[RMDB]
RNA sequence: GGGAACGACUCGAGUAGAGUCGAAAAUUUGUGGGGAGGAGUUGAGGUUUGGGCUGUAUCUGAGUGACAGGAUGAUGUUAUUUGAUUGAAGUGUAUAGCUAUACAAUCUAAAAUUAAACUGUGCAUGUAGAUGAUGCGUUUUCGAACGCAUCAUCUAAAAAGAAACAACAACAACAAC
Reactivity to 2A3 in 0.01 (KOAc 150mM, MgCl2 10mM, bicine 150mM(pH8.5), 24C), signal-to-noise 1, nucleotides 027 to 126: u190u090u080g030u010g000g000g010g000a030g000g020a040g050u020u030g050a040g050g000u060u090u090g100g020g020c040u030g010u040a020u020c000u030g020a080g020u070g030a010c000a020g050g050a070u050g010a000u090g080u140u070a210u090u050u060g050a050u010u000g040a030a010g010u000g030u070a050u090a240g000c000u020a020u030a290c000a000a020u030c020u030a120a040a030a030u070u090a080a050a010c040u050g050u100g070c020a030u160g060
Reactivity to DMS in 0.01 (KOAc 150mM, MgCl2 10mM, bicine 150mM(pH8.5), 24C), signal-to-noise 1, nucleotides 027 to 126: u010u050u000g030u000g010g000g010g000a060g010g000a070g000u000u010g010a110g010g000u010u010u010g000g020g020c060u000g030u010a040u000c040u000g010a100g030u000g000a040c080a050g000g000a190u010g010a030u020g000u010u000a100u010u000u000g010a070u000u000g020a080a060g030u000g000u000a080u010a180g020c020u000a050u000a160c040a020a020u000c020u000a030a050a080a020u000u000a030a040a200c080u010g020u010g020c070a040u000g010